[RMDB]
RNA sequence: GGGAACGACUCGAGUAGAGUCGAAAAGAUAUGGAGCACGAGGAUCAGGGUCCACUUGGACCUCGGAAACGAGCUAGUGGAGUCUGGGAGUGCUCCUAAGUCAAAGGACCUUCUUCGGAAGGUCCAAGUCAUUUAGAUCCUUCGGGAUCUAAAUGACAAAAGAAACAACAACAACAAC
Reactivity to DMS in 0.01 (KOAc 150mM, MgCl2 10mM, bicine 150mM(pH8.5), 24C), signal-to-noise 3, nucleotides 027 to 126: g000a030u000a300u020g020g010a010g010c010a000c000g000a070g010g000a080u000c000a010g000g030g020u000c000c000a030c040u010u000g040g000a100c300c030u000c000g000g000a070a130a200c000g000a000g020c010u000a000g030u000g000g000a050g010u000c000u010g000g010g000a060g010u000g000c010u000c000c000u000a000a050g000u010c040a070a090a180g000g010a010c010c000u000u000c000u010u010c130g010g010a020a000g000g000u000c000c000a000a020
Reactivity to 2A3 in 0.01 (KOAc 150mM, MgCl2 10mM, bicine 150mM(pH8.5), 24C), signal-to-noise 2, nucleotides 027 to 126: g020a030u080a040u220g000g000a000g000c010a020c020g110a300g090g000a020u050c000a020g040g000g190u000c000c000a020c000u020u080g040g130a210c080c000u000c010g010g050a020a020a010c020g000a010g010c030u030a010g000u010g020g090a180g300u000c000u000g040g000g000a030g000u020g000c010u000c000c000u000a000a000g000u020c030a030a040a080g000g000a000c000c000u000u010c020u040u110c300g120g000a000a000g010g000u000c000c000a000a000
Overview:
The data come from the RNA Mapping Database (RMDB), library TTRDEL. Chemical mapping of a 177-nucleotide RNA with DMS and 2A3. DMS adducts were read by reverse transcription with MarathonRT. In probing experiments dimethyl sulfate is read out at A N1 and C N3, which are open when not base-paired. The 2A3 profile rests on 4,172 reads.